[RMDB]
Description
Chemical mapping of a 177-nucleotide RNA with 2A3 and DMS. Conditions: 150 mM KOAc, 10 mM MgCl2 and 150 mM bicine (pH 8.5), 24 C. Source: RMDB library OK1LIB, as collected in RNAgym. DMS adducts were read by reverse transcription with MarathonRT. 2A3 is a SHAPE reagent: it acylates the 2'-hydroxyl of flexible nucleotides of all four kinds.
RNA sequence: GGGAACGACUCGAGUAGAGUCGAAAAGAAAGAAAGCCGAAGCAGCCAAAGAGGUCAAACGUCAGUAUAUCGGGCGUAAAUACCACAUUAUGCAGAAAGCCGACCUUAAUGUCGUAAAGAAAGAAAAACCUAAAUGACCGUUCGCGGUCAUUUAGGUAAAAGAAACAACAACAACAAC
Reactivity to 2A3 in 0.01 (KOAc 150mM, MgCl2 10mM, bicine 150mM(pH8.5), 24C), signal-to-noise 2, nucleotides 027 to 126: g000a000a130a060g040a020a000a010g010c040c020g040a130a010g040c010a000g000c050c000a000a130a000g090a040g050g000u010c000a030a030a030c000g010u000c000a030g050u170a270u030a050u300c090g000g010g000c000g000u000a190a060a000u120a020c000c040a000c000a090u150u150a020u190g060c000a020g130a020a100a040g000c050c040g000a050c040c000u070u130a100a000u180g000u000c000g020u020a060a060a010g110a010a000a100g210a010a120a040a000
Reactivity to DMS in 0.01 (KOAc 150mM, MgCl2 10mM, bicine 150mM(pH8.5), 24C), signal-to-noise 1, nucleotides 027 to 126: g000a070a220a150g000a120a130a190g000c000c000g000a060a120g000c010a090g000c100c180a030a090a000g000a150g000g020u010c030a020a060a050c100g000u000c130a050g020u000a100u030a030u020c130g000g000g000c140g100u000a040a070a060u000a150c090c080a010c120a050u050u000a100u000g040c010a010g000a130a030a140g000c040c000g000a050c000c090u000u000a060a050u070g000u010c090g000u000a060a120a160g030a060a000a060g070a070a110a040a060